Overview:
An RNA of 207 nucleotides, treated with 2A3 and read out base by base. It was measured as part of the RMDB library M2RFPK.
[RMDB]
RNA sequence: GGGAACGACUCGAGUAGAGUCGAAAAACUGAUACCUUACGAGGUAUCAGAAUGACUUCGUGGUAGAGCGCCACGAACGGAAAAUAAAGAAAGCUCGAUUGAAACGCACCGAGUACGCACGGUGCGAAAAAGUCGAUCCAGUUCGCUGGAUCGACAAGUCUAUCUAGCGGUUCGCCGCUAGAUAGACAAAAGAAACAACAACAACAAC
Reactivity to 2A3 in 0.01 (KOAc 150mM, MgCl2 10mM, bicine 150mM(pH8.5), 24C), signal-to-noise 2, nucleotides 027 to 156: a000c000u010g000a000u010a010c000c000u000u040a080c270g100a020g000g000u000a000u000c000a000g020a010a040u080g080a090c020u000u000c000g000u000g010g020u040a130g030a000g020c020g000c060c010a010c010g000a000a010c010g060g020a100a030a020a020u050a010a010a020g120a010a050a000g000c010u000c020g080a120u080u250g040a140a120a000c010g000c000a000c010c000g020a020g140u100a060c090g020c050a020c010g000g000u000g010c000g000a000a000a000a000a010g000u000c000g000a000u000c000c000a030g020u020u040c140g070c080u020g000g000a010u010c000g010a000c000a000a000
The 2A3 profile rests on 1,798 reads. For 2A3 the reverse transcriptase was SuperScript II with manganese.